[RMDB]
RNA sequence: GGGAACGACUCGAGUAGAGUCGAAAAACAGUCGGUACGCCGACUGAAGGGAACAGCAGCAACAUGGGCCUCGCUUCCUGCCGGCGCGGCCCGGGCUGCUGCUGUUAGCAUGCAUACGUGCAUGCAACCAUAUACGUUCCUUCGGGAACGUAUAUGGAAAAGAAACAACAACAACAAC
Reactivity to DMS in 0.01 (KOAc 150mM, MgCl2 10mM, bicine 150mM(pH8.5), 24C), signal-to-noise 5, nucleotides 027 to 126: a110c000a010g010u000c010g000g000u020a070c270g040c010c010g020a020c000u000g010a070a060g000g000g000a030a010c010a010g000c000a010g010c000a020a010c010a060u010g000g010g000c000c000u000c010g000c000u000u020c030c030u000g010c010c030g000g000c000g010c150g000g010c000c000c000g000g000g030c030u000g010c000u000g010c000u000g010u000u010a070g010c010a000u000g000c010a040u010a110c180g040u000g000c000a000u000g000c000a120a110
Reactivity to 2A3 in 0.01 (KOAc 150mM, MgCl2 10mM, bicine 150mM(pH8.5), 24C), signal-to-noise 8, nucleotides 027 to 126: a000c000a000g000u000c000g010g010u050a060c290g070c040c000g010a000c000u000g010a050a050g130g030g050a010a000c000a000g000c000a000g000c000a000a010c000a060u050g000g000g000c000c010u020c000g000c010u150u090c010c010u020g040c010c010g000g000c000g000c010g000g000c000c000c000g000g010g000c010u000g000c000u000g000c000u000g000u000u010a030g000c000a000u010g000c000a020u030a090c250g090u040g000c000a000u000g000c000a000a010

This 177-nucleotide RNA was probed chemically with DMS and 2A3. DMS adducts were read by reverse transcription with MarathonRT. It was measured as part of the RMDB libraries RFM100 and RFMREP. Conditions: 150 mM KOAc, 10 mM MgCl2 and 150 mM bicine (pH 8.5), 24 C.